[RMDB]
RNA sequence: GGGAACGACUCGAGUAGAGUCGAAAAGAUAUGGAUGAUGGCGUAGCUUGGACCGCACUGCGUCGGAAACGACGUUGCGCUAGCUAUCCAUCAUCCUAAGUCAAACCACACUGGUUCGCCAGUGUGGCUAAUAAUAGGAGUUCGCUCCUAUUAUUAGAAAAGAAACAACAACAACAAC
Reactivity to DMS in 0.01 (KOAc 150mM, MgCl2 10mM, bicine 150mM(pH8.5), 24C), signal-to-noise 9, nucleotides 027 to 126: g000a030u000a270u010g000g010a010u000g010a010u000g000g010c300g010u000a010g020c010u000u010g030g010a070c300c040g000c010a040c300u010g000c010g010u000c000g000g000a070a050a150c000g000a010c000g020u000u000g010c000g000c020u000a010g020c010u000a010u000c000c000a000u000c010a000u000c000c000u000a000a060g010u000c020a140a120a300c000c000a000c000a010c010u000g000g010u000u010c300g020c000c000a010g000u000g010u000g000g000
Reactivity to 2A3 in 0.01 (KOAc 150mM, MgCl2 10mM, bicine 150mM(pH8.5), 24C), signal-to-noise 9, nucleotides 027 to 126: g040a020u080a040u140g000g000a000u010g000a000u000g010g050c180g080u030a000g010c020u080u300g080g070a170c090c080g020c030a040c180u200g000c010g000u000c010g000g020a050a060a010c010g000a000c010g030u050u050g000c030g000c020u010a010g000c000u000a010u000c000c000a000u000c000a000u000c000c000u000a010a000g000u000c030a030a050a140c020c000a010c000a000c010u010g000g130u080u090c300g090c090c010a000g000u000g000u000g000g000